Source: RMDB library M2RFPK, as collected in RNAgym. Structure probing data (DMS and 2A3) for a 207-nucleotide construct. The RNA was probed in 150 mM KOAc, 10 mM MgCl2 and 150 mM bicine (pH 8.5) at 24 C.
[RMDB]
RNA sequence: GGGAACGACUCGAGUAGAGUCGAAAAAGUUCGCGCUUCCGUGAAACGCGAAAAUCGGACGGUGGCUGCAAGUCGCAUCGCAAAACCGCGGCAAAUGGAGUUAGCGAGAGGAGGCUGGGUUUUGGCUAGAACACACGGUACUUCGGUACCGUGUGAACAGAAAGAUAAGGUUCGCCUUAUCUUUCUGAAAAGAAACAACAACAACAAC
Reactivity to DMS in 0.01 (KOAc 150mM, MgCl2 10mM, bicine 150mM(pH8.5), 24C), signal-to-noise 2, nucleotides 027 to 156: a080g000u000u000c010g010c010g030c020u000u000c030c210g030u000g000a040a050a020c000g000c010g000a030a030a100a100u000c050g000g010a090c020g030g030u000g000g000c020u000g030c030a080a100g020u010c050g000c010a120u000c040g020c040a070a040a080a120c030c080g000c000g000g000c040a070a090a100u000g000g000a140g010u000u000a110g030c050g000a090g010a110g040g020a080g010g000c050u000g020g010g020u000u010u000u000g020g010c040u000a110g010a090a150c010a010c010a020c000g010g000u000a010c020u000u000c270g060g020u000a020c000c000g010u010g010u010g010a030a120
Reactivity to 2A3 in 0.01 (KOAc 150mM, MgCl2 10mM, bicine 150mM(pH8.5), 24C), signal-to-noise 4, nucleotides 027 to 156: a000g060u040u030c010g000c010g000c040u120u030c060c060g100u070g130a120a060a020c020g000c020g050a070a020a010a040u140c050g020g030a020c040g080g030u050g030g020c050u060g030c090a050a040g010u040c020g000c030a050u040c030g000c070a030a070a030a030c030c040g010c010g040g020c020a000a000a160u130g020g000a030g060u100u080a030g060c020g030a040g000a030g050g030a040g000g010c050u040g020g020g000u020u020u060u060g020g020c010u050a050g050a190a010c010a000c000a000c000g000g010u010a000c010u020u060c150g110g000u000a000c000c000g000u000g000u000g000a000a000
Reactivities are given for positions 27 through 156.